Chemical mapping of a 177-nucleotide RNA with DMS. For DMS, 654 sequencing reads were counted. DMS (dimethyl sulfate) methylates the pairing face of unpaired adenines and cytosines.
[RMDB]
RNA sequence: GGGAACGACUCGAGUAGAGUCGAAAAGAUAUGGAGCUUGCGUGUGACCCUCGGUCGGAAACGACCCGAGCACACGCACAAAGCUCCUAAGUCAAAACGAUACGGGGCCUUCGGGCCCCGUAUCGAACUAACCAACUACCUUCGGGUAGUUGGUUAGAAAAGAAACAACAACAACAAC
Reactivity to DMS in 0.01 (KOAc 150mM, MgCl2 10mM, bicine 150mM(pH8.5), 24C), signal-to-noise 1, nucleotides 027 to 126: g000a080u000a300u020g000g000a010g120c000u020u000g040c000g000u000g000u010g000a180c120c150c020u010c120g010g000u000c000g020g000a040a090a160c020g000a030c010c080c080g070a020g010c020a010c000a010c000g000c000a070c180a190a080a070g010c000u000c000c000u000a000a110g000u010c030a130a130a110a160c030g000a050u010a000c010g010g020g000g000c000c060u010u010c210g010g020g030c010c030c000c020g000u000a000u000c000g030a000a110